[RMDB]
RNA sequence: GGGAACGACUCGAGUAGAGUCGAAAAGGCACUCCGGACCGAAGGGUUGAGGUACCCAGAAGGAGGAAUCCACUCGGAGAGCGGGAGAGAAAUCACCUCCAGAGGACCCCUUCAGCGAACAGAAGACGUACGUUUUCUAGUUCGCUAGAAAACGUACAAAAGAAACAACAACAACAAC
Reactivity to 2A3 in 0.01 (KOAc 150mM, MgCl2 10mM, bicine 150mM(pH8.5), 24C), signal-to-noise 2, nucleotides 027 to 126: g020g000c010a010c080u000c010c010g030g030a030c020c030g060a040a020g070g010g010u080u100g100a060g070g100u110a080c000c020c020a030g050a040a020g020g050a060g000g010a010a110u060c000c000a030c020u040c040g060g030a060g000a030g140c050g030g070g020a150g000a000g020a070a130a040u050c030a060c020c010u000c020c000a000g040a070g060g010a060c010c010c020c010u000u020c030a060g050c020g070a070a000c000a040g110a150a020g020a060c110
Reactivity to DMS in 0.01 (KOAc 150mM, MgCl2 10mM, bicine 150mM(pH8.5), 24C), signal-to-noise 3, nucleotides 027 to 126: g050g030c050a100c040u000c000c060g030g000a090c090c070g020a130a090g000g000g000u010u000g030a070g020g030u010a090c050c010c040a110g000a080a070g000g010a090g030g000a110a090u000c010c000a130c060u000c070g020g010a060g000a100g000c080g020g010g010a140g010a160g000a050a100a090u010c060a130c030c020u000c020c020a110g010a100g010g000a100c040c020c000c000u000u020c040a100g000c080g000a020a040c090a040g000a020a060g020a090c130

Chemical mapping of a 177-nucleotide RNA with 2A3 and DMS.
The reactions ran in a buffer of 150 mM KOAc, 10 mM MgCl2 and 150 mM bicine (pH 8.5), at 24 C.
The data come from the RNA Mapping Database (RMDB), library VIROID.